[RMDB]
RNA sequence: GGGAACGACUCGAGUAGAGUCGAAAAUUCAGAGCCUUCGGGCUCUGAACCGUUUUCCUUGUUCGCAUUAUUGGUAACUCGGUAAUAAAAGGAAAGUUGCCGCAACUUGUUCGUUCGCGAACAAGAAUAAAAGAUCUGUUUUCGAACAGAUCUUUUAAAAAGAAACAACAACAACAAC
Reactivity to DMS in 0.01 (KOAc 150mM, MgCl2 10mM, bicine 150mM(pH8.5), 24C), signal-to-noise 4, nucleotides 027 to 126: u000u000c000a000g010a010g010c000c000u000u000c210g050g020g010c000u010c000u000g010a000a010c060c070g000u000u000u000u000c010c010u010u010g010u000u010c110g040c150a080u000u010a060u000u010g010g020u000a090a080c200u010c030g000g010u000a040a060u010a060a090a050a060g010g000a060a030a040g010u000u000g000c030c010g020c300a070a120c020u000u000g000u000u000c010g010u010u000c210g030c010g000a000a000c000a000a000g010a110a120
Reactivity to 2A3 in 0.01 (KOAc 150mM, MgCl2 10mM, bicine 150mM(pH8.5), 24C), signal-to-noise 1, nucleotides 027 to 126: u020u000c000a000g000a010g010c030c050u070u100c160g120g000g010c000u070c020u040g000a020a000c010c000g030u000u030u000u030c020c010u080u070g070u060u200c030g010c130a050u040u200a060u180u210g130g020u030a000a000c020u010c090g060g000u060a190a020u120a120a260a040a030g050g000a200a050a000g000u060u020g040c060c010g020c010a030a070c010u080u070g000u050u020c030g040u050u060c230g010c020g100a000a000c000a000a000g000a020a010
Background
Chemical mapping of a 177-nucleotide RNA with DMS and 2A3. The reactions ran in a buffer of 150 mM KOAc, 10 mM MgCl2 and 150 mM bicine (pH 8.5), at 24 C. The 2A3 profile rests on 846 reads. For DMS, 3,529 sequencing reads were counted. 2A3 adducts were read by reverse transcription with SuperScript II with manganese. It was measured as part of the RMDB library M2PK50.